[RMDB]
RNA sequence: GGGAACGACUCGAGUAGAGUCGAAAAGAUAUGGAUCCAUGGGCUUUUGACGGGGUUCGGAAACGAACCUCCGAUAAGCCUAAAUGGAUCCUAAGUCAAAAGUUGACUAUCUUCGGAUAGUCAACAAGUAACUAACGCAGUUCGCUGCGUUAGUUACAAAAGAAACAACAACAACAAC
Reactivity to DMS in 0.01 (KOAc 150mM, MgCl2 10mM, bicine 150mM(pH8.5), 24C), signal-to-noise 4, nucleotides 027 to 126: g010a070u000a300u000g000g010a010u000c000c010a010u010g000g000g010c000u000u000u020u000g020a300c300g000g000g010g010u000u000c000g000g000a100a090a160c020g000a000a010c000c000u000c000c000g010a180u000a010a010g000c000c010u010a000a090a020u000g000g010a000u000c000c000u000a000a100g000u010c040a110a060a060a120g000u000u000g000a000c000u000a000u000c000u000u000c180g020g000a010u000a000g000u000c000a000a000c000a030a080
Reactivity to 2A3 in 0.01 (KOAc 150mM, MgCl2 10mM, bicine 150mM(pH8.5), 24C), signal-to-noise 1, nucleotides 027 to 126: g000a020u060a040u210g000g000a000u010c000c000a000u020g000g050g000c040u300u300u270u160g020a020c040g000g010g010g020u000u000c000g000g000a040a020a000c010g000a010a000c010c000u000c000c010g000a000u000a040a000g000c010c000u010a000a050a010u000g000g000a000u010c000c000u010a060a010g040u020c040a050a030a000a200g000u010u020g010a000c010u010a000u000c010u020u030c130g090g000a010u000a000g000u000c010a000a010c010a000a000

An RNA of 177 nucleotides, treated with DMS and 2A3 and read out base by base. The reactions ran in a buffer of 150 mM KOAc, 10 mM MgCl2 and 150 mM bicine (pH 8.5), at 24 C. Reactivities are given for positions 27 through 126. 2A3 adducts were read by reverse transcription with SuperScript II with manganese.